RNA sequence: GGGAACGACUCGAGUAGAGUCGAAAAGGGCAUCUGUCACGGGAACGCAUUGAACCGAUUGGGCAAGCCUUACAUCUGAUGCGUUCGCCAUUCGCCAGUGCGGUCAACGAUUUGUGGCUGGAGGUGGGGCCGCGUGCUAAGCGCAUGGAGGAUAUCGCUUCCAUUGGGGAUUCGUCCCCAAUGGAAGAAAAGAAACAACAACAACAAC
Reactivity to 2A3 in 0.01 (KOAc 150mM, MgCl2 10mM, bicine 150mM(pH8.5), 24C), signal-to-noise 2, nucleotides 027 to 156: g040g000g000c000a030u020c100u140g090u020c090a080c130g000g010g020a030a000c000g010c010a000u000u040g070a080a040c080c030g020a090u110u110g030g010g000c170a110a090g050c010c000u090u150a050c050a060u070c010u090g010a010u020g030c030g040u000u000c080g120c010c000a120u090u100c030g060c110c000a040g030u040g020c030g000g000u060c050a180a100c070g050a130u020u080u210g050u080g000g080c080u060g020g020a020g020g020u190g050g000g000g000c020c040g020c020g000u000g000c080u120a040a050g020c020g000c050a020u040g000g020a070g050g000a070u000a040u300c050g000
Structure probing data (2A3) for a 207-nucleotide construct. Source: RMDB library OK3TST, as collected in RNAgym.